[RMDB]
RNA sequence: GGGAACGACUCGAGUAGAGUCGAAAAGAUAUGGAACAACACAUCUUUUGACGCCAGCAUAUCGGAAACGAUAUGGCUGGCGAUAAGAUGGUUGUUCCUAAGUCAAAGUCCCCCUUCGGGGGGACAACCAAUACAGGACGUUCGCGUCCUGUAUUGGAAAAGAAACAACAACAACAAC
Reactivity to 2A3 in 0.01 (KOAc 150mM, MgCl2 10mM, bicine 150mM(pH8.5), 24C), signal-to-noise 2, nucleotides 027 to 126: g000a000u070a050u140g000g000a000a010c000a000a010c290a020c000a270u030c040u020u160u150u300g300a250c120g020c020c010a000g000c010a000u010a010u000c000g020g000a070a040a020c020g000a000u000a000u030g140g060c010u000g000g000c010g000a000u010a010a000g000a000u010g020g000u000u000g010u000u010c000c000u000a020a000g000u000c000a020a040a120g000u010c030c000c000c000c000u010u130c290g020g040g000g040g000g000a000c000a000a010
Reactivity to DMS in 0.01 (KOAc 150mM, MgCl2 10mM, bicine 150mM(pH8.5), 24C), signal-to-noise 2, nucleotides 027 to 126: g000a050u010a300u020g010g020a040a020c000a000a010c000a140c000a010u000c000u000u000u020u020g000a230c100g040c010c000a010g000c000a020u000a000u000c010g030g000a090a070a130c000g030a000u000a010u000g000g020c000u000g000g040c000g010a000u010a020a000g010a010u000g000g000u000u000g000u000u000c000c000u010a000a050g000u000c030a110a170a260g010u000c000c000c010c010c000u000u010c190g020g010g010g040g020g000a010c010a000a130
Chemical mapping of a 177-nucleotide RNA with 2A3 and DMS. The DMS profile rests on 2,162 reads. Reactivities are given for positions 27 through 126. It was measured as part of the RMDB library TTRDES.